[RMDB]
RNA sequence: GGGAACGACUCGAGUAGAGUCGAAAAUGAUCAAGAGUUUGUGAUCCAUUGAUUUAACAUAUAAGUCAGCCAGAUGGGCAAUAACAUGGUAUCAUAGUUGAUUUGCAAAAUAAUAGACAUUAGCCCAUUAAGCUUUUGUCAUUGGCAACUGUAGGCCCUCUAUUAAUAGGUUCGCCUAUUAAUAGAGAAAAGAAACAACAACAACAAC
Reactivity to DMS in 0.01 (KOAc 150mM, MgCl2 10mM, bicine 150mM(pH8.5), 24C), signal-to-noise 3, nucleotides 027 to 156: u000g010a060u000c050a060a090g010a140g020u000u010u020g020u000g020a080u000c020c050a160u000u000g010a100u000u010u000a050a130c090a120u020a160u000a040a120g020u000c020a060g000c080c020a160g020a080u000g020g010g000c030a050a080u010a070a090c050a160u010g010g060u000a030u020c050a060u000a140g020u000u000g010a100u010u000u010g000c050a060a070a040a140u000a030a130u000a130g010a030c000a050u000u010a050g040c000c010c060a200u000u010a130a090g000c020u000u000u000u000g020u000c010a130u010u000g010g010c010a030a080c060u010g010u000a130g020g010c030c050
Reactivity to 2A3 in 0.01 (KOAc 150mM, MgCl2 10mM, bicine 150mM(pH8.5), 24C), signal-to-noise 5, nucleotides 027 to 156: u120g030a030u060c030a060a010g050a030g130u100u170u190g030u060g010a040u000c030c010a020u020u060g040a020u070u110u120a110a030c070a010u190a030u060a180a060g060u040c040a010g010c020c010a060g080a250u160g040g020g040c020a020a050u110a060a030c050a040u030g020g030u150a020u100c010a050u070a080g030u020u030g050a130u070u030u140g030c030a080a050a030a020u140a040a090u060a090g020a010c000a010u010u020a010g000c020c030c000a020u070u180a050a020g000c000u010u010u030u030g010u010c020a050u020u060g010g000c020a110a060c090u100g080u170a050g100g040c030c000